[RMDB]
RNA sequence: GGGAACGACUCGAGUAGAGUCGAAAAGAAUCCUCGUCCUUACGGCUUUUGUUUUCCAGCUGGAGCCGUCUCCUAUAUACUGAUUUCGAUCUGUAUUUUGCUGGACGACAACGAGGAUACAAUUAGAGGGAUCCGUUUAGUUCGCUGAACGGAUCCCAAAAGAAACAACAACAACAAC
Reactivity to 2A3 in 0.01 (KOAc 150mM, MgCl2 10mM, bicine 150mM(pH8.5), 24C), signal-to-noise 5, nucleotides 027 to 126: g080a010a060u030c020c000u010c010g050u070c000c020u180u170a090c070g050g010c040u100u070u080u060g030u000u040u060u000c020c000a010g000c030u050g000g000a000g050c060c050g180u030c020u000c000c010u040a030u010a000u000a140c020u070g020a060u040u050u090c200g130a020u000c030u040g000u030a040u010u130u100u100g070c070u020g010g020a030c020g000a010c020a040a000c020g000a000g010g010a010u060a050c030a000a170u220u200a040g050a080
Reactivity to DMS in 0.01 (KOAc 150mM, MgCl2 10mM, bicine 150mM(pH8.5), 24C), signal-to-noise 2, nucleotides 027 to 126: g040a180a030u000c000c000u000c020g030u020c010c030u000u050a080c090g020g000c300u000u010u000u000g010u000u000u020u000c010c040a060g000c030u020g010g010a020g030c220c100g000u030c100u000c010c000u020a030u040a030u000a000c030u030g060a040u000u000u000c190g000a020u010c030u000g000u000a000u000u010u010u010g000c040u000g000g000a040c150g000a020c050a060a090c000g020a030g010g020a010u000a040c150a120a100u020u030a050g000a300